RNA sequence: GGGAACGACUCGAGUAGAGUCGAAAAUACUGAGAUUGCCUUGCAACAGGUUUCCAUGUUCUUCCGAUCAGAACCAAAGUGGGAGGUGGUGGAACCUUUGAAAGACAUAGGUUGGAGAAUAAGGAAGCCACCUCCAAACAUUCGUGUUUGGAGGUGGAAAAGAAACAACAACAACAAC
Reactivity to DMS in 0.01 (KOAc 150mM, MgCl2 10mM, bicine 150mM(pH8.5), 24C), signal-to-noise 2, nucleotides 027 to 126: u000a060c060u010g010a160g010a060u010u000g000c010c050u000u000g010c050a050a030c210a010g030g030u010u010u000c010c010a030u000g020u000u000c010u000u010c000c010g020a130u010c080a130g010a070a150c130c100a030a100a110g010u000g030g000g000a050g020g030u000g000g020u000g000g000a060a050c020c030u000u000u000g000a070a070a100g000a040c070a040u000a120g010g000u020u000g000g000a090g030a030a060u000a110a080g000g000a050a110g000
Reactivity to 2A3 in 0.01 (KOAc 150mM, MgCl2 10mM, bicine 150mM(pH8.5), 24C), signal-to-noise 1, nucleotides 027 to 126: u150a040c040u070g010a040g020a220u050u080g000c020c040u010u040g020c010a010a010c040a090g000g040u000u090u000c020c000a030u040g090u000u000c010u060u000c000c010g090a130u020c010a050g130a240a060c060c050a050a000a090g090u170g050g030g000a000g000g030u110g000g030u030g030g040a010a010c020c060u000u090u020g030a040a040a000g050a000c000a000u110a030g000g050u000u080g060g010a120g060a120a050u140a150a020g050g010a050a040g040
An RNA of 177 nucleotides, treated with DMS and 2A3 and read out base by base. The RNA was probed in 150 mM KOAc, 10 mM MgCl2 and 150 mM bicine (pH 8.5) at 24 C.